[RMDB]
RNA sequence: GGGAACGACUCGAGUAGAGUCGAAAACACCCCGCGUUCGCGCGGGGUGAAACAGGUAGUUGCUAUCUCAAUUACCUGAACUGGCCAUGGUCUGGAUAGCAAAAACUGAUGACUUCGGUCAUCAGAAUCAGACGUAUAACUUCGGUUAUACGUCUGAAAAAGAAACAACAACAACAAC
Reactivity to DMS in 0.01 (KOAc 150mM, MgCl2 10mM, bicine 150mM(pH8.5), 24C), signal-to-noise 2, nucleotides 027 to 126: c000a020c000c000c000c010g020c000g050u000u010c210g050c020g040c030g040g010g000g010u010g000a020a040a070c020a010g000g010u010a010g030u000u010g000c140u000a060u000c070u000c020a040a030u000u000a000c000c000u000g000a080a120c130u010g020g020c060c020a070u020g000g020u010c140u000g000g000a040u000a020g010c150a040a060a040a140a130c000u000g010a010u000g010a010c010u010u010c180g040g000u000c010a010u000c010a000g000a080a080
Reactivity to 2A3 in 0.01 (KOAc 150mM, MgCl2 10mM, bicine 150mM(pH8.5), 24C), signal-to-noise 2, nucleotides 027 to 126: c010a000c010c010c000c010g000c000g000u030u080c270g000c000g010c040g120g010g000g020u020g000a030a000a010c000a000g040g020u010a010g050u010u010g020c030u060a050u160c020u010c100a040a110u030u010a000c000c000u020g000a060a040c060u050g050g000c010c020a070u140g070g020u090c060u060g050g040a060u040a020g040c040a010a040a030a020a090c010u010g010a010u000g000a000c020u030u040c230g080g000u010c010a000u000c000a000g020a010a060